[RMDB]
The record gives the reactivity of an RNA of 207 nucleotides to DMS and 2A3. DMS adducts were read by reverse transcription with MarathonRT. Values cover nucleotides 27 to 156. For DMS, 1,850 sequencing reads were counted. The reactions ran in a buffer of 150 mM KOAc, 10 mM MgCl2 and 150 mM bicine (pH 8.5), at 24 C.
RNA sequence: GGGAACGACUCGAGUAGAGUCGAAAAGUAUCCCUAGAUGAUAAAACACCGCUCAUGGCUCGUAAGAGCGGUUAAAUUAGCAAGUAAUGCAAAUUACGCGAGGUAACGCAUGGCCUAGGCUCGUUAGAAAAGGGAGAAUCCUUCGGGAUUCUCCCAAGUCUCUAACUAGGUUCGCCUAGUUAGAGACAAAAGAAACAACAACAACAAC
Reactivity to DMS in 0.01 (KOAc 150mM, MgCl2 10mM, bicine 150mM(pH8.5), 24C), signal-to-noise 1, nucleotides 027 to 156: g010u000a090u000c010c000c010u010a140g020a130u040g010a070u010a030a120a130a140c060a030c040c010g000c010u000c010a140u000g060g000c090u000c150g010u010a170a180g020a020g030c030g020g000u020u000a010a050a130u000u000a030g040c010a150a120g020u010a090a070u010g040c090a090a110a090u000u000a030c010g000c040g000a110g000g000u010a070a040c030g020c040a050u000g030g010c020c020u000a120g000g010c030u000c080g030u010u000a150g050a050a080a070a130g010g000g030a060g000a030a010u000c010c000u030u000c300g000g030g000a020u000u000c000u000c000c010c000a000a010
Reactivity to 2A3 in 0.01 (KOAc 150mM, MgCl2 10mM, bicine 150mM(pH8.5), 24C), signal-to-noise 2, nucleotides 027 to 156: g060u070a140u160c000c000c000u050a110g040a210u110g010a060u120a080a070a050a000c010a050c010c010g000c000u000c000a080u070g090g000c020u030c050g100u050a130a030g000a000g030c000g000g000u000u000a000a000a010u070u010a010g010c080a220a000g050u180a120a010u090g070c070a040a110a110u130u040a090c080g030c010g050a010g000g010u070a090a000c040g030c150a080u110g010g000c000c000u030a030g040g030c000u030c020g050u020u060a040g130a050a070a040a070g000g000g000a000g000a000a000u000c000c000u050u080c220g020g000g020a000u000u000c010u010c010c000c000a000a000